[RMDB]
RNA sequence: GGGAACGACUCGAGUAGAGUCGAAAACACGAGGCCACGGUCUCCCGCAUCACCACCAACAAGUACGUGCAGACGGAAUGGGGUAUCUACGAGCUCAAGUACUUCUUCACCAACUCGGUGAGCGGCGCACUGAAUCUACGUUCGCGUAGAUUCAGUGAAAAGAAACAACAACAACAAC
Reactivity to 2A3 in 0.01 (KOAc 150mM, MgCl2 10mM, bicine 150mM(pH8.5), 24C), signal-to-noise 3, nucleotides 027 to 126: c070a020c040g020a020g030g000c040c020a050c120g030g020u010c010u000c000c020c000g020c020a130u030c000a000c030c000a020c020c020a060a090c040a140a020g050u050a040c050g030u040g010c030a020g040a050c020g040g070a080a070u140g050g000g000g040u060a120u090c030u080a050c110g070a040g000c000u010c040a040a020g010u010a030c000u040u020c000u030u030c010a010c030c020a090a120c050u060c120g000g000u010g010a010g000c010g020g000c020g000
Reactivity to DMS in 0.01 (KOAc 150mM, MgCl2 10mM, bicine 150mM(pH8.5), 24C), signal-to-noise 4, nucleotides 027 to 126: c080a120c120g020a110g020g000c020c060a110c150g030g010u000c020u000c020c030c020g000c020a110u000c050a040c030c010a110c110c110a090a090c150a100a040g030u000a030c110g000u000g010c110a060g010a140c060g000g020a080a080u010g010g010g000g010u000a050u010c090u010a080c140g010a120g010c060u000c050a070a060g010u000a080c050u000u000c020u010u000c070a030c030c080a080a110c120u010c070g000g030u010g010a020g000c030g010g000c190g030
This 177-nucleotide RNA was probed chemically with 2A3 and DMS.
As a SHAPE reagent, 2A3 marks flexible, mostly unpaired nucleotides at the ribose 2'-OH.
Source: RMDB library OK2TRN, as collected in RNAgym.